The record gives the reactivity of an RNA of 177 nucleotides to DMS and 2A3. Values cover nucleotides 27 to 126. For 2A3 the reverse transcriptase was SuperScript II with manganese. 2A3 is a SHAPE reagent: it acylates the 2'-hydroxyl of flexible nucleotides of all four kinds. The RNA was probed in 150 mM KOAc, 10 mM MgCl2 and 150 mM bicine (pH 8.5) at 24 C. It was measured as part of the RMDB library M2PK50.

RNA sequence: GGGAACGACUCGAGUAGAGUCGAAAAGACCAAUCGUUCGCGAUUGGUCAAAAGGUGGAUGCUACGCUACCGUAGUAGCAAAAGUGCAGCUACAAAGCACAAAAACUUGGUUGUUCGCAACCAAGAAGAUAAGGUCUUCGUUCGCGAAGACCUUAUCAAAAGAAACAACAACAACAAC
Reactivity to DMS in 0.01 (KOAc 150mM, MgCl2 10mM, bicine 150mM(pH8.5), 24C), signal-to-noise 1, nucleotides 027 to 126: g000a000c000c000a000a010u000c000g050u000u040c250g000c040g000a030u010u000g000g020u000c020a000a080a060a070g050g010u000g030g000a080u000g000c000u020a040c070g000c060u010a170c070c190g040u010a070g000u000a000g000c070a050a050a050a090g020u000g000c010a070g040c070u010a040c120a060a110a130g030c050a010c060a050a080a010a070a120c030u000u000g000g000u000u030g000u000u000c130g000c020a010a000c010c010a000a010g000a080a000
Reactivity to 2A3 in 0.01 (KOAc 150mM, MgCl2 10mM, bicine 150mM(pH8.5), 24C), signal-to-noise 2, nucleotides 027 to 126: g010a020c000c020a000a010u000c010g060u050u020c270g000c000g140a000u000u000g000g000u000c000a030a010a000a000g150g000u090g020g090a060u040g040c000u030a020c040g000c040u070a100c060c060g080u070a030g020u000a000g000c030a040a000a000a120g020u020g000c000a010g000c030u010a050c080a130a090a060g010c050a030c040a040a040a010a050a060c000u010u010g020g000u010u000g000u080u100c220g000c090a010a000c000c000a000a000g020a010a010